Chemical mapping of a 177-nucleotide RNA with DMS and 2A3. It was measured as part of the RMDB library TTRDES. The 2A3 profile rests on 2,073 reads. The RNA was probed in 150 mM KOAc, 10 mM MgCl2 and 150 mM bicine (pH 8.5) at 24 C.
RNA sequence: GGGAACGACUCGAGUAGAGUCGAAAAGAUAUGGACUCCAGACGGGAGAAGUGUUCGGAAACGAACAUACUUCUUUGAUCGUCGGAGUCCUAAGUCAAAGAUGGCCAAGCUUCGGCUUGGCCAUCAAGAAGAUUUCUUAGUUCGCUAAGAAAUCUUCAAAAGAAACAACAACAACAAC
Reactivity to DMS in 0.01 (KOAc 150mM, MgCl2 10mM, bicine 150mM(pH8.5), 24C), signal-to-noise 2, nucleotides 027 to 126: g000a040u000a280u000g010g010a010c000u000c000c010a160g030a020c000g020g020g010a010g000a010a020g020u000g000u000u010c000g000g000a070a060a160c020g000a020a010c010a070u020a100c030u000u000c000u010u010u000g010a140u010c000g010u000c000g000g000a020g010u010c000c000u000a000a080g000u000c020a110a200a180g000a000u000g000g000c000c000a000a010g010c000u000u010c250g030g000c000u000u010g010g020c020c000a000u000c000a040a080
Reactivity to 2A3 in 0.01 (KOAc 150mM, MgCl2 10mM, bicine 150mM(pH8.5), 24C), signal-to-noise 1, nucleotides 027 to 126: g000a000u070a000u060g000g000a000c000u000c030c040a150g010a020c020g020g090g040a010g000a020a000g020u020g010u020u000c000g000g040a000a040a020c000g030a010a000c010a000u130a020c010u050u000c000u300u170u300g140a130u100c010g000u010c020g000g000a000g000u000c010c000u010a000a030g000u010c020a000a160a140g000a000u010g010g130c030c000a010a000g030c060u090u280c300g090g000c000u000u050g030g040c000c030a000u000c000a000a000